[RMDB]
RNA sequence: GGGAACGACUCGAGUAGAGUCGAAAAGUUUCGCGAGUGUGAGAGGGAAGCGCCGCGGCCUGUAUUUCUAGACCUGCCCUUCGCCUGGUUCGUGGCGCCUUGUGACCCCGGGCCCCUGCCGCCUGCAUUUCAAGACUUCAUUCGUGAAGUCUUGAAAAAAAGAAACAACAACAACAAC
Reactivity to 2A3 in 0.01 (KOAc 150mM, MgCl2 10mM, bicine 150mM(pH8.5), 24C), signal-to-noise 3, nucleotides 027 to 126: g020u030u030u080c040g000c030g020a080g050u140g000u050g050a140g010a080g020g030g010a080a030g020c000g000c000c000g000c000g010g030c000c000u090g030u090a170u030u150u010c070u050a060g010a070c000c020u060g030c010c000c000u050u040c030g040c020c020u050g030g000u130u190c010g020u030g010g020c010g030c000c000u020u060g020u070g050a110c000c000c000c010g030g010g000c000c000c000c000u030g030c000c000g010c000c000u020g010c010a060
Reactivity to DMS in 0.01 (KOAc 150mM, MgCl2 10mM, bicine 150mM(pH8.5), 24C), signal-to-noise 3, nucleotides 027 to 126: g010u010u000u000c040g000c040g000a080g040u050g020u010g020a120g000a110g010g000g020a140a120g000c030g000c000c000g020c030g020g030c020c020u000g010u040a090u010u040u010c070u010a090g020a090c100c030u010g020c020c000c020u020u020c060g010c090c040u000g010g030u010u020c010g010u010g000g010c000g000c030c020u000u020g010u000g000a140c040c010c000c060g000g010g020c010c010c040c010u000g000c030c010g020c030c010u000g010c060a150